[RMDB]
RNA sequence: GGGAACGACUCGAGUAGAGUCGAAAAUCGGGGUGACCGGCAACCCCGCCAACACCAACGCGCUGAUCGCGAUGACCAAUGCGCCCGACAUUCCCCGCGAGCGGUUCUCGGCGCUCACCCGGCUGGAAUGAAUUAUACGUUUCGACGUAUAAUUCAUAAAAGAAACAACAACAACAAC
Reactivity to 2A3 in 0.01 (KOAc 150mM, MgCl2 10mM, bicine 150mM(pH8.5), 24C), signal-to-noise 4, nucleotides 027 to 126: u060c000g010g010g010g020u030g040a080c040c000g020g030c040a050a080c020c010c010c000g010c020c020a070a040c060a030c030c030a070a100c040g020c000g020c060u060g040a110u090c040g010c050g140a140u160g060a050c040c030a070a070u110g030c030g010c020c010c010g050a040c020a080u060u050c000c000c020c000g030c020g020a040g010c030g040g000u110u030c060u020c050g060g000c000g010c010u010c010a060c000c010c000g090g000c020u020g010g030a050
Reactivity to DMS in 0.01 (KOAc 150mM, MgCl2 10mM, bicine 150mM(pH8.5), 24C), signal-to-noise 9, nucleotides 027 to 126: u010c030g010g000g000g020u000g000a090c090c050g020g020c050a180a070c020c010c010c020g000c120c060a080a100c090a080c040c060a080a120c110g010c040g020c040u000g000a050u000c040g010c080g000a100u010g000a080c060c040a060a080u010g000c040g020c060c010c000g010a080c100a140u010u000c020c010c010c100g010c090g000a050g010c030g010g000u000u010c070u010c060g010g010c030g010c030u000c050a120c040c040c030g000g010c040u010g000g000a270

Source: RMDB library OK2TRN, as collected in RNAgym. Chemical mapping of a 177-nucleotide RNA with 2A3 and DMS. Values are in units of 0.01, from 0 to 300, in steps of 10. 2A3 adducts were read by reverse transcription with SuperScript II with manganese. Values cover nucleotides 27 to 126. For DMS, 14,420 sequencing reads were counted.